[RMDB]
RNA sequence: GGGAACGACUCGAGUAGAGUCGAAAAUUACUUAGGUAGCAUGGCAUGCCGUGACCGAACUCGACGACGUGUCCUCGUUACCAUCCUCGCGACGGACCGCUGGCGAUACCUGGGCGAUCACCGAAAGCAACCUCUCGUAAUUCGUUACGAGAGGUUGAAAAGAAACAACAACAACAAC
Reactivity to DMS in 0.01 (KOAc 150mM, MgCl2 10mM, bicine 150mM(pH8.5), 24C), signal-to-noise 3, nucleotides 027 to 126: u060u030a050c110u020u020a070g000g040u000a020g010c030a060u000g000g060c070a060u020g050c050c000g000u000g010a110c100c090g000a180a100c150u020c090g020a000c030g020a060c040g010u030g000u060c000c000u010c130g000u020u020a060c060c000a160u000c030c030u000c090g000c070g010a070c080g010g000a040c080c040g020c040u000g000g000c060g040a090u020a000c040c000u020g020g000g030c030g000a080u000c060a110c030c040g020a130a110a080g040
Reactivity to 2A3 in 0.01 (KOAc 150mM, MgCl2 10mM, bicine 150mM(pH8.5), 24C), signal-to-noise 7, nucleotides 027 to 126: u150u080a080c070u090u130a070g000g000u020a010g030c040a050u070g040g000c020a030u040g040c010c030g060u060g080a140c090c120g040a170a110c060u070c120g110a070c000g010a010c030g070u060g100u140c000c000u050c080g020u020u010a040c000c000a020u080c010c010u030c040g010c010g050a050c030g020g030a030c010c020g030c070u040g020g000c010g020a030u050a110c000c020u050g010g060g000c030g020a030u060c020a030c030c020g050a080a070a010g040

Chemical mapping of a 177-nucleotide RNA with DMS and 2A3. DMS adducts were read by reverse transcription with MarathonRT. The DMS profile rests on 3,483 reads. The reactions ran in a buffer of 150 mM KOAc, 10 mM MgCl2 and 150 mM bicine (pH 8.5), at 24 C. Source: RMDB library OK1LIB, as collected in RNAgym. 2A3 adducts were read by reverse transcription with SuperScript II with manganese.